An RNA of 177 nucleotides, treated with 2A3 and read out base by base. The reactions ran in a buffer of 150 mM KOAc, 10 mM MgCl2 and 150 mM bicine (pH 8.5), at 24 C. Reactivities are given for positions 27 through 126. 2A3 adducts were read by reverse transcription with SuperScript II with manganese. It was measured as part of the RMDB library 15KREP.
RNA sequence: GGGAACGACUCGAGUAGAGUCGAAAAGCUGGGCAACGAUCCGAGGGGACUGUCCCUCUCGAGAAUCGGCAAAUGGGGCCCCUCGCUCGUAUCUCCGAGAGGAGACGAGAAGGAGGUGGAUCUCCCUGUAGGAAAGCUAGUUCGCUAGCUUUCCUACAAAAGAAACAACAACAACAAC
Reactivity to 2A3 in 0.01 (KOAc 150mM, MgCl2 10mM, bicine 150mM(pH8.5), 24C), signal-to-noise 1, nucleotides 027 to 126: g030c070u070g050g040g000c060a190a030c050g000a030u000c010c010g010a020g020g020g010g010a020c110u170g110u220c030c000c010u000c000u040c000g190a220g030a080a070u020c010g000g030c020a060a060a080u140g000g000g040g020c030c010c030c000u000c000g040c020u000c000g040u030a170u070c010u020c000c010g030a030g000a020g050g010a010g010a010c000g010a000g010a020a120g130g000a010g000g090u300g090g040a140u050c040u000c000c000c020u000